[RMDB]
RNA sequence: GGGAACGACUCGAGUAGAGUCGAAAAACAUUUUUGUGAUUAAGAACCUUCUAUGUUUAAGGAGAAUACAUUUGCAUAACAGGAAAACCUGGGAAUUGAUCAGUGUUAUUCAUUUGCCCAGAUUUGGGCAUAGGAACUCAUUCGUGAGUUCCUAUGCAAAAGAAACAACAACAACAAC
Reactivity to 2A3 in 0.01 (KOAc 150mM, MgCl2 10mM, bicine 150mM(pH8.5), 24C), signal-to-noise 3, nucleotides 027 to 126: a000c040a060u150u070u050u120u140g090u090g070a160u140u090a150a050g070a070a080c000c000u030u000c040u120a140u120g090u020u160u060a080a030g070g020a060g060a090a010u050a050c020a060u060u030u140g040c010a020u030a110a100c030a040g040g040a020a240a020a040c000c020u040g010g030g100a130a060u090u020g020a030u130c050a060g090u010g040u270u090a030u090u030c010a040u070u070u200g070c000c010c000a050g010a060u090u140u100g110g050
Reactivity to DMS in 0.01 (KOAc 150mM, MgCl2 10mM, bicine 150mM(pH8.5), 24C), signal-to-noise 4, nucleotides 027 to 126: a050c030a040u000u000u000u000u010g020u010g010a100u010u010a140a100g010a190a140c040c010u000u000c030u000a050u000g000u000u000u000a080a060g000g000a100g000a060a040u010a040c050a010u000u000u010g030c050a030u000a090a120c050a020g000g000a160a080a070a120c040c000u000g000g010g020a120a090u010u000g000a060u010c100a050g010u000g000u000u000a030u000u000c020a070u010u010u000g010c020c000c000a100g010a120u000u000u000g010g010
Conditions: 150 mM KOAc, 10 mM MgCl2 and 150 mM bicine (pH 8.5), 24 C. Structure probing data (2A3 and DMS) for a 177-nucleotide construct. Values cover nucleotides 27 to 126. For 2A3, 2,200 sequencing reads were counted. The data come from the RNA Mapping Database (RMDB), library OK2TRN.